[RMDB]
RNA sequence: GGGAACGACUCGAGUAGAGUCGAAAAUGCUGAGAGCCAGGCGCAGCCGUUCUACCGUCUUGCUGACAAGGUACGGCUUGUCUCGUCGCAGAUCCCAGACGCGCCGAACGUGGCACGGCUGUACAGCCCAAGCACAAGACUUCGGUCUUGUGCUUGGAAAAGAAACAACAACAACAAC
Reactivity to DMS in 0.01 (KOAc 150mM, MgCl2 10mM, bicine 150mM(pH8.5), 24C), signal-to-noise 3, nucleotides 027 to 126: u010g030c010u010g010a210g020a070g040c020c050a110g020g010c030g000c130a040g000c020c000g010u000u000c030u000a140c140c130g000u000c010u000u010g020c230u010g010a010c040a070a170g010g000u000a030c040g010g010c010u010u000g010u000c030u000c030g010u000c030g000c040a100g020a130u000c010c020c010a150g000a070c070g010c100g020c040c010g010a050a090c150g010u010g010g000c010a040c050g000g000c000u000g010u000a060c060a080g000c070
Reactivity to 2A3 in 0.01 (KOAc 150mM, MgCl2 10mM, bicine 150mM(pH8.5), 24C), signal-to-noise 3, nucleotides 027 to 126: u150g010c020u050g020a020g010a000g140c040c030a030g020g010c040g020c060a010g000c000c000g000u050u010c020u060a100c050c040g020u010c040u110u250g170c150u140g020a020c030a050a100g050g000u050a030c010g010g000c000u000u050g000u000c030u010c010g050u020c020g000c000a020g000a100u020c000c000c000a000g010a010c030g030c010g020c010c000g020a200a050c150g030u170g020g000c040a020c070g000g000c010u050g030u130a030c010a030g040c000

Chemical mapping of a 177-nucleotide RNA with DMS and 2A3. The data come from the RNA Mapping Database (RMDB), library OK2TST. Conditions: 150 mM KOAc, 10 mM MgCl2 and 150 mM bicine (pH 8.5), 24 C. For 2A3, 3,866 sequencing reads were counted. Values cover nucleotides 27 to 126.